[RMDB]
RNA sequence: GGGAACGACUCGAGUAGAGUCGAAAAAUGCUUAUUGAGGUAAUUUUGCGUUUAAUGCAGGUGCAGAACAUUUAAUCUUUCCUAGAUUAAAGACGUAAUACACCACCAGACUCACCAACAAUCCAAAGAUCGAAAAUAAUUUCGAUUAUUUUCGAUCAAAAGAAACAACAACAACAAC
Reactivity to 2A3 in 0.01 (KOAc 150mM, MgCl2 10mM, bicine 150mM(pH8.5), 24C), signal-to-noise 3, nucleotides 027 to 126: a000u050g020c020u060u100a050u090u220g090a090g000g100u120a100a120u050u100u080u060g000c020g030u060u100u150a110a060u140g050c050a010g000g100u070g020c040a000g030a100a020c000a030u010u040u030a020a010u010c010u040u110u070c020c110u050a050g000a020u010u030a020a020a020g040a020c040g000u000a000a020u050a070c020a000c010c010a000c000c030a010g050a100c010u030c030a040c010c000a010a120c020a030a050u060c010c010a050a020a100
Reactivity to DMS in 0.01 (KOAc 150mM, MgCl2 10mM, bicine 150mM(pH8.5), 24C), signal-to-noise 4, nucleotides 027 to 126: a050u010g020c050u000u000a080u010u000g010a120g010g010u020a020a090u000u000u000u000g010c030g020u000u000u000a090a070u000g010c090a100g010g020u000g010c040a060g010a090a040c060a100u010u000u000a000a010u000c000u000u010u000c150c140u000a080g000a000u000u000a010a020a020g020a090c170g010u010a040a090u010a030c050a040c030c010a090c140c050a090g000a080c060u000c060a070c080c040a050a060c150a070a080u000c040c050a070a090a150